[RMDB]
RNA sequence: GGGAACGACUCGAGUAGAGUCGAAAAGCUAGUCGGAGACGACUAGCAACGAUCAGUUCGCUGAUCGGAAGGUGCAUUCAAAUACGCUAGAAGCACCAAGCCCCGACGCCUAGCGUAAAACUGAGAAAGCAGAUAACAAAAAUAAAAAGGCGUCGGGGCAGUCCGCAUAUUUCGAUAUGCGGACUGCAAAAGAAACAACAACAACAAC
Reactivity to 2A3 in 0.01 (KOAc 150mM, MgCl2 10mM, bicine 150mM(pH8.5), 24C), signal-to-noise 2, nucleotides 027 to 156: g000c010u000a010g010u000c000g060g020a070g010a110c000g010a000c010u000a000g000c000a000a010c000g000a000u010c000a000g030u030u070c170g010c080u010g000a000u010c020g010g030a040a030g010g000u000g010c070a280u020u090c010a010a050a060u090a030c010g010c010u030a020g010a040a010g020c000a000c000c000a010a020g000c000c000c000c000g000a000c000g010c010c000u040a020g000c000g020u000a010a070a060a050c010u040g010a010g120a220a100a040g160c010a010g050a090u160a210a000c100a040a140a130a080a030u220a100a140a060a030a010g000g000c000g010u000c000g010g000g000
Reactivity to DMS in 0.01 (KOAc 150mM, MgCl2 10mM, bicine 150mM(pH8.5), 24C), signal-to-noise 1, nucleotides 027 to 156: g040c020u000a010g000u010c000g000g010a300g000a300c000g040a050c040u000a000g000c000a040a030c000g020a010u000c010a010g020u000u000c290g050c000u000g050a010u010c060g000g010a090a030g020g040u000g030c000a300u000u000c030a060a080a210u000a030c050g000c000u070a150g040a080a160g010c030a040c000c000a080a180g050c000c000c000c030g000a060c000g020c000c030u000a110g010c000g000u000a060a070a130a140c080u010g010a260g000a070a170a120g010c110a040g020a210u000a060a080c040a020a060a110a080a220u010a070a080a150a150a160g010g000c000g000u000c020g010g000g050

This 207-nucleotide RNA was probed chemically with 2A3 and DMS. The RNA was probed in 150 mM KOAc, 10 mM MgCl2 and 150 mM bicine (pH 8.5) at 24 C. Values cover nucleotides 27 to 156. DMS adducts were read by reverse transcription with MarathonRT. The DMS profile rests on 1,429 reads.